[RMDB]
RNA sequence: GGGAACGACUCGAGUAGAGUCGAAAAGAUAUGGAUCUGACAGAGCCUCCGAAGACAGGUGUAAGUACAUCGGAAACGAUGUAUUGAGCCUGUCUUCGGAGGAACUACUCUGGAGGAUCCUAAGUCACGUAAUACACAGCUUCGGCUGUGUAUUACGAAAAGAAACAACAACAACAAC
Reactivity to DMS in 0.01 (KOAc 150mM, MgCl2 10mM, bicine 150mM(pH8.5), 24C), signal-to-noise 2, nucleotides 027 to 126: g010a060u010a300u010g000g010a010u000c000u010g000a300c000a000g000a000g010c010c000u010c000c000g000a000a040g000a000c010a010g000g000u000g020u000a210a080g000u000a000c000a020u010c010g000g000a090a210a260c020g000a000u000g010u000a000u000u000g000a300g000c030c010u020g000u000c010u000u040c000g030g000a000g010g000a000a000c000u000a300c010u000c000u010g000g000a300g000g000a000u000c000c000u000a010a080g000u000c030a270
This 177-nucleotide RNA was probed chemically with DMS. Reactivities are given for positions 27 through 126. DMS adducts were read by reverse transcription with MarathonRT. The data come from the RNA Mapping Database (RMDB), library TTRINS. The RNA was probed in 150 mM KOAc, 10 mM MgCl2 and 150 mM bicine (pH 8.5) at 24 C.